[RMDB]
RNA sequence: GGGAACGACUCGAGUAGAGUCGAAAAUACCAUUCCAGUGGACCACUGUGACCCAAGGGACAUUCAACCAUCAUGAUGUGGUCUUCACCUCCAUUCCUGUCCUCCUCUACCCAGAUUGAGCACCAUCGUGAUCUUAAGUUUUCGAACUUAAGAUCACAAAAGAAACAACAACAACAAC
Reactivity to DMS in 0.01 (KOAc 150mM, MgCl2 10mM, bicine 150mM(pH8.5), 24C), signal-to-noise 8, nucleotides 027 to 126: u030a140c050c030a140u010u010c040c040a110g030u010g020g010a050c050c030a050c020u010g010u010g000a070c060c020c060a090a100g010g000g000a070c120a080u030u020c130a110a090c060c040a110u000c060a040u020g020a070u000g030u010g000g010u000c030u010u010c070a090c040c040u000c040c030a080u000u000c020c010u010g010u000c030c020u000c030c010u010c030u010a090c020c010c010a100g000a090u020u010g000a050g010c050a090c070c060a070u020c160
Reactivity to 2A3 in 0.01 (KOAc 150mM, MgCl2 10mM, bicine 150mM(pH8.5), 24C), signal-to-noise 9, nucleotides 027 to 126: u110a020c010c010a030u090u060c030c020a040g050u050g040g030a030c010c000a030c040u050g040u060g090a080c000c030c060a090a130g040g000g010a040c030a110u130u110c040a110a050c020c010a030u080c020a040u090g070a060u140g090u040g040g010u000c000u030u030c010a040c000c000u030c020c010a060u060u040c010c010u030g040u050c000c010u020c010c000u030c010u040a090c010c000c000a020g020a090u080u110g030a040g010c040a030c040c010a040u100c060

Chemical mapping of a 177-nucleotide RNA with DMS and 2A3. Conditions: 150 mM KOAc, 10 mM MgCl2 and 150 mM bicine (pH 8.5), 24 C. 2A3 adducts were read by reverse transcription with SuperScript II with manganese. Values are in units of 0.01, from 0 to 300, in steps of 10. DMS adducts were read by reverse transcription with MarathonRT.